[RMDB]
RNA sequence: GGGAACGACUCGAGUAGAGUCGAAAAGGUGUUACGUCAGCCAUGAGGGUAACGGUCAGCCUCAUGGUUGUCACAGAGAUGUGACGACGCUGACCAUAUAGGUUACCGCUGACUAUAUGGUAACACAGCAGAGCAGUACAUUCGUGUACUGCUCUGCAAAAGAAACAACAACAACAAC
Reactivity to DMS in 0.01 (KOAc 150mM, MgCl2 10mM, bicine 150mM(pH8.5), 24C), signal-to-noise 1, nucleotides 027 to 126: g010g030u000g010u000u000a000c010g000u000c040a030g000c010c130a140u010g030a080g010g030g000u010a040a040c060g010g010u010c030a060g010c010c220u010c110a100u010g010g040u000u010g010u000c000a010c000a010g000a250g000a200u000g020u000g000a010c000g010a000c030g000c020u000g010a010c000c010a070u000a100u000a080g000g000u000u000a010c010c000g000c020u000g000a020c020u000a080u010a040u010g000g010u020a000a000c010a010c000a110
Reactivity to 2A3 in 0.01 (KOAc 150mM, MgCl2 10mM, bicine 150mM(pH8.5), 24C), signal-to-noise 1, nucleotides 027 to 126: g010g000u030g010u020u020a010c020g000u000c020a000g000c040c070a130u180g060a060g080g140g000u040a030a020c030g010g030u040c020a020g030c010c010u110c070a140u140g050g000u030u040g000u010c000a000c000a010g030a000g000a080u010g000u010g000a000c020g000a000c030g000c010u000g000a000c010c000a000u070a040u040a080g080g000u000u000a030c000c000g000c030u000g000a000c020u020a040u010a020u150g060g000u030a010a010c020a000c010a000
An RNA of 177 nucleotides, treated with DMS and 2A3 and read out base by base. The RNA was probed in 150 mM KOAc, 10 mM MgCl2 and 150 mM bicine (pH 8.5) at 24 C. For 2A3, 1,717 sequencing reads were counted. DMS adducts were read by reverse transcription with MarathonRT.